[RMDB]
RNA sequence: GGGAACGACUCGAGUAGAGUCGAAAAUGCACUUAUGUAUGUUUUUGUUUAACGUGGACAAAGACUUACAGAUAGGUGCAAAAAAUAAAUCCUCUUUUGCAACCCAGAACUCAUUGUUCAGUAUGAGAACAUACUAAUGGUUCGCCAUUAGUAUGUUAAAAGAAACAACAACAACAAC
Reactivity to 2A3 in 0.01 (KOAc 150mM, MgCl2 10mM, bicine 150mM(pH8.5), 24C), signal-to-noise 9, nucleotides 027 to 126: u040g000c000a010c000u050u030a030u040g010u000a010u020g010u000u000u000u000u000g130u030u040u050a290a140c180g110u300g070g000a000c000a000a000a000g010a000c000u010u010a000c010a010g180a120u130a030g000g000u000g000c000a050a020a010a000a000a030u130a000a020a010u010c010c010u030c040u040u060u060u050g040c020a050a090c020c010c020a040g030a060a040c010u010c030a060u040u080g060u200u120c060a050g050u090a050u080g040a040g010
Reactivity to DMS in 0.01 (KOAc 150mM, MgCl2 10mM, bicine 150mM(pH8.5), 24C), signal-to-noise 9, nucleotides 027 to 126: u010g000c000a000c000u000u000a050u000g000u000a000u000g000u000u000u000u000u000g000u010u000u000a090a130c300g020u030g000g010a010c000a000a000a000g000a010c000u000u000a000c000a060g010a180u010a020g000g010u000g010c000a000a010a060a070a060a060u020a040a070a110u020c030c020u000c090u000u000u010u010g010c090a090a110c020c020c030a130g010a100a150c020u010c050a040u010u010g000u010u010c150a120g010u000a030u000g000a070g010